The record gives the reactivity of an RNA of 177 nucleotides to DMS and 2A3. The DMS profile rests on 2,120 reads. For 2A3 the reverse transcriptase was SuperScript II with manganese. Reactivities are given for positions 27 through 126. DMS adducts were read by reverse transcription with MarathonRT. Source: RMDB library OK2TST, as collected in RNAgym.

RNA sequence: GGGAACGACUCGAGUAGAGUCGAAAAGGCCUGGAAACACCUGGCUGGAAAGGGCCUUGGCCACCAGUGACCUGUAAGGGGGAGAUGAGGUUGGUGAGGGAGCUGGGGUGUCACCAAUGGCAGCCAGACUGUUAUGCCCAUUCGUGGGCAUAACAGUAAAAGAAACAACAACAACAAC
Reactivity to DMS in 0.01 (KOAc 150mM, MgCl2 10mM, bicine 150mM(pH8.5), 24C), signal-to-noise 3, nucleotides 027 to 126: g030g010c020c010u000g020g000a140a110a110c160a090c080c010u000g010g000c000u020g020g000a050a150a170g020g010g000c000c010u000u000g010g000c030c010a140c020c010a040g020u000g000a180c030c020u000g010u040a120a180g000g010g000g010g010a180g010a080u010g030a080g000g000u000u000g030g010u020g020a160g000g000g020a300g010c030u000g000g020g000g010u030g020u010c000a170c050c060a080a040u010g000g010c010a050g010c030c010a050g010
Reactivity to 2A3 in 0.01 (KOAc 150mM, MgCl2 10mM, bicine 150mM(pH8.5), 24C), signal-to-noise 1, nucleotides 027 to 126: g020g000c010c020u010g050g030a110a140a010c050a020c020c020u000g020g000c000u000g070g020a040a050a010g000g000g000c000c000u030u030g050g010c000c010a090c020c010a080g000u060g130a190c000c000u100g050u190a140a150g050g020g010g060g000a160g010a090u220g000a050g060g100u160u110g050g020u110g020a040g000g020g050a030g000c030u000g000g000g040g000u090g030u060c040a030c040c020a020a030u090g030g000c020a000g000c020c000a000g010